Structure probing data (2A3 and DMS) for a 177-nucleotide construct.
For DMS, 1,218 sequencing reads were counted.
The reactions ran in a buffer of 150 mM KOAc, 10 mM MgCl2 and 150 mM bicine (pH 8.5), at 24 C.
For 2A3, 1,694 sequencing reads were counted.
As a SHAPE reagent, 2A3 marks flexible, mostly unpaired nucleotides at the ribose 2'-OH.

RNA sequence: GGGAACGACUCGAGUAGAGUCGAAAAGACAAAUGCAGCAUAUUAGGCUAAGCAGGAAAGGGACGGUACCUCCUGGUGUCAGUUCAUACGGUGUGAUGCAUCUGCGUCGUGCACACAUGCACCCAAAGGGAGUUGUGUAAUUCGUUACACAACUCCCAAAAGAAACAACAACAACAAC
Reactivity to 2A3 in 0.01 (KOAc 150mM, MgCl2 10mM, bicine 150mM(pH8.5), 24C), signal-to-noise 2, nucleotides 027 to 126: g050a010c020a020a180a000u090g020c000a000g010c020a000u090a100u260u260a110g050g030c020u030a060a010g060c000a000g060g000a000a080a110g050g000g020a010c040g060g010u030a020c050c010u050c000c070u090g000g010u020g030u050c050a060g000u080u050c040a040u060a120c080g000g000u040g040u020g030a100u020g000c020a020u010c020u090g000c020g100u120c030g000u060g010c030a000c010a020c000a030u070g000c030a030c020c010c040a030a010a020
Reactivity to DMS in 0.01 (KOAc 150mM, MgCl2 10mM, bicine 150mM(pH8.5), 24C), signal-to-noise 2, nucleotides 027 to 126: g000a090c060a060a080a110u010g000c050a020g000c010a040u000a100u000u000a100g020g000c070u000a060a120g030c050a020g010g010a020a060a090g000g000g000a120c140g030g010u000a090c050c030u010c070c060u000g000g000u030g030u000c080a020g000u030u000c070a040u010a110c200g010g010u020g020u010g030a070u000g010c000a020u000c050u020g020c170g020u000c150g000u000g000c040a030c080a100c110a020u000g000c040a130c010c010c020a060a110a080